An RNA of 177 nucleotides, treated with DMS and read out base by base. For DMS the reverse transcriptase was MarathonRT. The RNA was probed in 150 mM KOAc, 10 mM MgCl2 and 150 mM bicine (pH 8.5) at 24 C.
RNA sequence: GGGAACGACUCGAGUAGAGUCGAAAAGUUAGAAUUACAAAUGUCGAUUAUCACGCCCUAGGUGGAAACUUGGAUGAUAUGGUCAAGGCAUAUUCAUUGGGGUUAUAUGACGACGAUUUAGAGGAAGACCCGCGUUACAAUUCGUUGUAACGCGGGUAAAAGAAACAACAACAACAAC
Reactivity to DMS in 0.01 (KOAc 150mM, MgCl2 10mM, bicine 150mM(pH8.5), 24C), signal-to-noise 1, nucleotides 027 to 126: g000u000u000a140g000a110a100u030u000a120c120a010a070a070u000g010u040c000g000a120u000u000a080u030c270a080c300g010c000c010c010u010a060g080g000u010g010g000a060a060a040c020u000u000g000g100a030u000g010a060u000a040u000g040g000u000c030a030a030g000g000c120a110u040a060u010u000c000a010u000u000g050g010g000g000u000u010a190u000a090u000g000a040c050g020a050c000g010a100u000u010u000a050g000a140g000g000a120a100g000